[RMDB]
RNA sequence: GGGAACGACUCGAGUAGAGUCGAAAAGCGAUACCGUGCACGAGAGCAUCUGUCGGCGCGUACAGCCGGAUGUCACCCCCUUGCCGCCCGAAGAGCGGGCCGAGAUGUACCAGCGCUCGCGCACCACCACCCGCAUGCGGUACCUGCGCUCGUGGAGCAUCAACUAGAAUUUCGAUUCUAGUUGAUGAAAAGAAACAACAACAACAAC
Reactivity to DMS in 0.01 (KOAc 150mM, MgCl2 10mM, bicine 150mM(pH8.5), 24C), signal-to-noise 3, nucleotides 027 to 156: g030c050g020a140u000a100c040c030g020u010g000c020a070c050g000a050g000a120g040c030a110u010c040u000g030u000c040g010g040c020g060c090g000u000a080c090a160g010c020c010g000g020a070u000g010u010c060a170c050c020c020c030c030u010u000g010c020c020g000c020c030c020g010a150a110g010a170g030c040g010g030g020c010c110g010a140g010a080u010g020u000a060c040c040a140g020c020g010c040u000c050g010c010g020c020a080c050c050a070c030c030a100c010c010c020g000c060a060u000g010c040g000g000u000a040c040c010u010g010c020g010c020u010c050g010u000g000g000a170g020
Reactivity to 2A3 in 0.01 (KOAc 150mM, MgCl2 10mM, bicine 150mM(pH8.5), 24C), signal-to-noise 4, nucleotides 027 to 156: g070c020g020a040u050a090c050c010g020u040g020c010a040c050g050a040g000a020g020c010a040u060c080u140g160u140c040g020g010c040g020c040g040u070a060c060a050g020c010c000g050g020a040u190g170u250c110a170c010c020c000c000c020u010u030g040c000c020g020c000c010c030g070a060a030g020a010g090c010g000g010g010c010c010g050a050g010a060u070g030u100a080c050c050a050g030c000g000c050u060c030g020c000g000c010a030c000c010a010c000c010a030c000c020c010g000c030a040u070g010c010g030g000u030a040c010c030u050g010c000g000c050u030c030g010u040g020g020a020g030
Structure probing data (DMS and 2A3) for a 207-nucleotide construct. The reactions ran in a buffer of 150 mM KOAc, 10 mM MgCl2 and 150 mM bicine (pH 8.5), at 24 C. DMS adducts were read by reverse transcription with MarathonRT.